Source: RMDB library 15KREP, as collected in RNAgym. The record gives the reactivity of an RNA of 177 nucleotides to 2A3.
RNA sequence: GGGAACGACUCGAGUAGAGUCGAAAAUCAUCCUCGAGUUUCUUGAUGGUUCUCCUGCUCUUCCGGAGCUUUCUUUCGAGGUCUUCCGCGUCUUUUCUUGCUUGGAUCCAUUUCUCGAGGACGUCCUGUUUCCUUCAUACUUCGGUAUGAAGGAAACAAAAGAAACAACAACAACAAC
Reactivity to 2A3 in 0.01 (KOAc 150mM, MgCl2 10mM, bicine 150mM(pH8.5), 24C), signal-to-noise 1, nucleotides 027 to 126: u060c020a030u000c020c040u000c010g020a030g020u100u220u190c000u190u290g040a040u030g000g030u070u070c040u020c040c020u000g000c010u010c040u170u010c000c050g040g000a050g040c000u020u110u020c010u020u210u120c040g000a000g020g040u020c050u050u010c000c020g020c060g110u070c030u010u070u060u070c050u030u080g020c040u080u090g040g010a030u050c050c000a070u050u080u000c000u000c010g000a020g010g010a010c020g050u100c000c010u000
The RNA was probed in 150 mM KOAc, 10 mM MgCl2 and 150 mM bicine (pH 8.5) at 24 C.